[RMDB]
RNA sequence: GGGAACGACUCGAGUAGAGUCGAAAAGGGUUUGAGCCAUCGCCCGAAUAGGAUGGGUGAUACAAGUCGACAUUGUACGCGACGUAGUACGUACUCAUUAGUGCGAAAGCACGGUUAGUCCGACUAGGCAGGGACGAUCUUCUGUCAAUACUUAGAAAAAUUUUAUGGCAUUCGUGCCAUAAAAUUUAAAAGAAACAACAACAACAAC
Reactivity to DMS in 0.01 (KOAc 150mM, MgCl2 10mM, bicine 150mM(pH8.5), 24C), signal-to-noise 2, nucleotides 027 to 156: g030g010g020u000u000u010g020a110g000c030c040a080u010c030g010c000c000c000g020a080a130u010a120g000g020a150u000g030g010g020u000g010a080u010a060c130a050a100g010u000c020g000a040c030a170u020u000g040u010a070c060g020c030g020a120c130g000u010a140g020u040a030c000g020u000a000c000u000c090a070u010u000a060g050u000g010c000g000a100a090a270g000c020a020c030g000g010u010u000a100g020u000c040c000g020a180c020u000a050g020g030c000a090g010g030g010a120c060g010a140u000c100u000u000c030u010g010u000c040a070a130u000a080c030u010u010a140g020a050a080
Reactivity to 2A3 in 0.01 (KOAc 150mM, MgCl2 10mM, bicine 150mM(pH8.5), 24C), signal-to-noise 3, nucleotides 027 to 156: g040g010g050u040u090u110g060a030g010c010c010a020u020c010g020c000c010c050g030a080a140u220a130g000g040a030u120g010g010g030u040g030a030u060a080c070a050a070g030u010c000g050a050c020a080u080u220g060u200a040c030g000c000g040a020c020g000u010a000g010u010a060c020g000u020a000c000u020c010a030u050u080a080g010u000g000c000g010a080a010a010g000c010a000c010g000g010u010u030a000g000u040c030c000g000a030c050u030a030g020g020c050a030g020g010g030a010c070g050a070u000c010u180u010c000u040g040u030c010a050a050u080a110c060u100u090a070g070a040a150